[RMDB]
RNA sequence: GGGAACGACUCGAGUAGAGUCGAAAAAACCAUGGCACUACGAAGUAAACGUAUGAUAGGCAAGAGUAAAGAAAACGCAUUAAUCAAGCGUAGUAUAAGGUGGCAUGCGAUUAUGCAAACAUCGAGGGCGGUCUGUUAUAUUCGUAUAACAGACCGCAAAAGAAACAACAACAACAAC
Reactivity to DMS in 0.01 (KOAc 150mM, MgCl2 10mM, bicine 150mM(pH8.5), 24C), signal-to-noise 2, nucleotides 027 to 126: a100a110c090c010a070u010g000g000c050a060c040u000a030c070g030a130a220g010u010a010a000a100c020g120u010a030u000g000a050u000a080g000g000c070a110a060g000a180g040u050a000a140a100g020a080a120a080a020c050g000c000a030u020u030a020a010u000c140a000a300g020c000g050u000a060g020u020a020u000a170a130g000g090u000g000g000c060a030u000g040c060g010a110u020u020a060u000g030c040a120a010a200c060a060u000c010g010a040g000g020
Reactivity to 2A3 in 0.01 (KOAc 150mM, MgCl2 10mM, bicine 150mM(pH8.5), 24C), signal-to-noise 1, nucleotides 027 to 126: a000a070c000c000a010u030g130g000c050a000c010u030a000c040g000a220a000g150u150a000a000a000c010g120u140a000u100g060a200u090a020g080g000c030a120a000g000a070g190u110a180a050a000g140a130a110a000a000c030g000c060a000u150u110a030a150u200c000a000a150g000c070g070u060a000g070u010a160u040a290a120g000g000u180g050g000c040a000u000g030c000g070a000u000u120a030u300g020c040a000a130a170c060a010u000c000g120a020g000g000
The record gives the reactivity of an RNA of 177 nucleotides to DMS and 2A3. For DMS the reverse transcriptase was MarathonRT. For DMS, 1,426 sequencing reads were counted. The 2A3 profile rests on 720 reads. It was measured as part of the RMDB library RFM100. For 2A3 the reverse transcriptase was SuperScript II with manganese. Conditions: 150 mM KOAc, 10 mM MgCl2 and 150 mM bicine (pH 8.5), 24 C.